RNA sequence: GGGAACGACUCGAGUAGAGUCGAAAAGAGGUCUCUCUCGAGCUCCUCUGCCUUUCUUCUUGUGGAGAUCCACUUUUCGAGGAUUUCUUCCCUUCCUCCCCUCCGGCCCUUCCUCGACUCGGGUUGGUACGUCAUUUGUUCGCAAAUGACAAAAGAAACAACAACAACAAC
Reactivity to 2A3 in 0.01 (KOAc 150mM, MgCl2 10mM, bicine 150mM(pH8.5), 24C), signal-to-noise 9, nucleotides 027 to 129: g140a030g040g070u030c000u000c000u000c010u040c050g000a000g000c030u030c010c010u020c020u020g030c010c010u050u070u040c020u060u010c010u090u290g050u070g030g010a050g020a070u060c020c010a070c040u080u090u100u130c090g050a070g040g020a090u060u050u030c020u020u040c010c000c000u020u040c000c000u010c000c000c000c000u010c000c000g020g000c000c000c000u020u040c000c010u010c010g020a030c010u000c000g010g010g010u000u010g020g030u060a040c050
Reactivity to DMS in 0.01 (KOAc 150mM, MgCl2 10mM, bicine 150mM(pH8.5), 24C), signal-to-noise 9, nucleotides 027 to 129: g010a070g040g020u020c000u020c020u030c040u000c100g010a070g000c070u020c010c010u010c000u020g020c030c010u000u010u010c040u030u010c050u000u100g030u040g020g010a020g000a120u040c010c000a050c050u020u010u040u050c080g000a110g020g010a090u010u010u010c080u000u000c000c010c020u000u020c010c000u020c000c000c000c000u020c030c020g020g040c040c010c050u000u030c050c030u020c030g010a020c050u000c030g000g000g000u030u000g000g030u010a040c110